[RMDB]
RNA sequence: GGGAACGACUCGAGUAGAGUCGAAAACGGGUCGGUCCGUCCUGGCACAUCUAACCCUAAAUGCGCGCUGGUUGAAGUGGCUUCUCCUGGGCGAUCGCUCGCUGUUUUUGUGGCUGGCUUUCAGCGGCCGGUACGGCAUAUUCGUAUGCCGUACCGGAAAAGAAACAACAACAACAAC
Reactivity to 2A3 in 0.01 (KOAc 150mM, MgCl2 10mM, bicine 150mM(pH8.5), 24C), signal-to-noise 1, nucleotides 027 to 126: c000g030g020g010u060c020g030g000u000c030c010g010u020c020c000u050g040g000c020a020c010a050u030c060u130a070a110c030c000c000u070a150a170a040u110g040c070g000c020g000c060u050g030g070u040u030g030a090a000g030u030g080g000c000u070u020c000u020c020c000u060g040g000g000c010g040a080u100c030g000c010u020c010g030c040u040g000u020u080u020u060u050g080u020g050g010c010u000g080g000c000u010u140u060c020a050g010c010g000g000
Reactivity to DMS in 0.01 (KOAc 150mM, MgCl2 10mM, bicine 150mM(pH8.5), 24C), signal-to-noise 1, nucleotides 027 to 126: c070g020g020g000u000c000g000g000u000c010c020g010u030c000c000u050g000g010c080a100c050a080u020c020u070a120a070c050c000c020u020a080a090a060u030g010c010g030c050g030c090u000g010g000u000u000g010a070a100g000u040g000g000c020u010u000c010u000c030c040u020g000g080g010c060g000a080u030c070g000c040u030c040g040c040u000g000u000u000u020u000u040g050u000g000g000c000u020g010g000c070u060u060u000c010a040g000c070g010g000